[RMDB]
RNA sequence: GGGAACGACUCGAGUAGAGUCGAAAAGAUAUGGAAAGAAAGUGGCGCACUCUAAGACAGUCGGAAACGAUCGAGAGUGCGAACUACCACAUUUCUUUCCUAAGUCAAAGGUACGUUCGCGUACCAAUCGUAUCAGUUGGUUCGCCAACUGAUACGAAAAAGAAACAACAACAACAAC
Reactivity to DMS in 0.01 (KOAc 150mM, MgCl2 10mM, bicine 150mM(pH8.5), 24C), signal-to-noise 3, nucleotides 027 to 126: g000a110u000a300u010g010g000a020a040a000g000a000a010a030g030u000g000g000c000g000c000a000c000u000c000u010a190a100g030a110c300a090g000u000c000g010g020a110a090a120c020g000a000u000c100g030a030g010a020g030u000g000c010g010a020a010c080u000a300c050c010a010c000a090u020u000u000c000u000u000u000c000c010u010a000a050g010u000c060a040a130a150g040g000u010a000c010g030u000u000c230g020c020g020u010a000c000c000a020a060
Reactivity to 2A3 in 0.01 (KOAc 150mM, MgCl2 10mM, bicine 150mM(pH8.5), 24C), signal-to-noise 1, nucleotides 027 to 126: g030a020u110a070u150g000g000a000a020a030g000a010a000a030g000u010g060g000c010g000c000a000c000u030c010u020a100a060g080a090c070a080g090u040c030g030g020a110a040a020c020g010a020u070c060g020a030g020a000g020u000g000c000g010a000a000c030u070a020c000c030a000c010a060u000u000u000c000u000u000u000c000c000u000a070a020g070u010c060a160a000a100g000g000u000a010c000g050u060u060c300g000c000g070u000a000c030c000a000a070